Record summary: Source: RMDB library RNAMAK, as collected in RNAgym. The record gives the reactivity of an RNA of 207 nucleotides to DMS and 2A3. Reactivities are rounded to 0.1 and cut off at 0 and 3. Conditions: 150 mM KOAc, 10 mM MgCl2 and 150 mM bicine (pH 8.5), 24 C. DMS adducts were read by reverse transcription with MarathonRT. 2A3 adducts were read by reverse transcription with SuperScript II with manganese.

[RMDB]
RNA sequence: GGGAACGACUCGAGUAGAGUCGAAAAGUCCGUUUCGACGGACGGUUACACCUUUGUGGCAACUAUGGACCCAGAGAUAAACAGCCCAUUGGGCUGUCACUAUCGACGAAGGGUCCACGAAUUGCCACUCUGGUCUUAAGGGUUUUUCGAAACCCAAAUAUCCACCACUUUUCGAAGUGGUGGAUAUAAAAGAAACAACAACAACAAC
Reactivity to DMS in 0.01 (KOAc 150mM, MgCl2 10mM, bicine 150mM(pH8.5), 24C), signal-to-noise 2, nucleotides 027 to 156: g050u000c000c010g060u000u000u010c250g020a090c030g010g000a010c000g000g040u000u000a050c130a020c020c010u000u000u000g020u010g020g030c010a030a010c030u000a040u010g000g010a040c000c000c000a120g020a300g010a000u000a020a090a050c010a010g040c020c000c030a300u010u000g080g030g050c000u010g040u000c020a050c120u000a010u000c010g020a300c070g020a130a160g000g020g010u000c000c010a020c050g040a020a070u000u000g020c010c010a000c000u010c020u000g000g010u000c050u000u000a140a170g000g020g020u020u010u000u010u020c270g050a060a030a040c010c000c000a000a030
Reactivity to 2A3 in 0.01 (KOAc 150mM, MgCl2 10mM, bicine 150mM(pH8.5), 24C), signal-to-noise 2, nucleotides 027 to 156: g000u000c000c010g000u090u080u180c250g170a020c000g030g000a000c000g030g010u080u110a090c000a050c010c000u020u020u030g010u000g000g000c000a040a000c060u090a070u070g000g000a010c000c000c030a030g020a000g000a010u000a000a300a000c000a000g010c000c000c110a300u090u260g000g000g000c000u000g010u000c000a020c000u000a000u000c040g100a170c010g060a190a080g000g000g000u000c000c000a000c000g020a130a300u010u000g000c000c000a020c000u010c000u000g000g020u010c070u100u150a120a090g010g000g040u000u010u010u020u150c190g130a080a000a010c000c000c030a010a100